[RMDB]
RNA sequence: GGGAACGACUCGAGUAGAGUCGAAAAUUCGCAUCGGUCGGCCAAGACAUCCGCUACGGGCUGGGCGCGGUGCGCAACGUUGGCGCUAAUGUCGUGGGCUCGUUGCUCCAAACCCGCAACGACAAGGGUUGUACACUCAUUUCGAUGAGUGUACAACAAAAGAAACAACAACAACAAC
Reactivity to DMS in 0.01 (KOAc 150mM, MgCl2 10mM, bicine 150mM(pH8.5), 24C), signal-to-noise 6, nucleotides 027 to 126: u010u010c050g020c040a030u000c030g020g020u010c040g010g000c020c010a070a040g000a160c090a080u020c080c080g010c110u000a120c130g000g000g010c030u010g020g010g010c020g000c040g010g020u020g000c040g010c100a060a020c050g020u000u000g020g010c030g020c050u000a070a100u010g000u000c030g030u000g010g000g000c050u000c050g010u000u000g010c040u020c080c100a050a090a120c070c030c050g010c090a060a040c030g020a030c120a080a140g010g010
Reactivity to 2A3 in 0.01 (KOAc 150mM, MgCl2 10mM, bicine 150mM(pH8.5), 24C), signal-to-noise 5, nucleotides 027 to 126: u070u020c030g000c010a010u000c020g100g120u040c030g100g010c020c000a040a010g070a060c040a130u080c040c030g060c100u130a080c090g060g040g000c010u050g070g050g000c100g000c010g040g020u050g000c010g000c010a040a010c040g080u080u100g080g000c030g020c150u090a150a090u110g010u050c010g020u050g000g040g000c000u010c020g030u020u030g000c020u030c030c030a040a080a110c010c010c000g000c050a060a020c020g040a010c020a050a040g180g000
The data come from the RNA Mapping Database (RMDB), library OK2TST.
Chemical mapping of a 177-nucleotide RNA with DMS and 2A3.
The 2A3 profile rests on 7,222 reads.
For DMS, 6,892 sequencing reads were counted.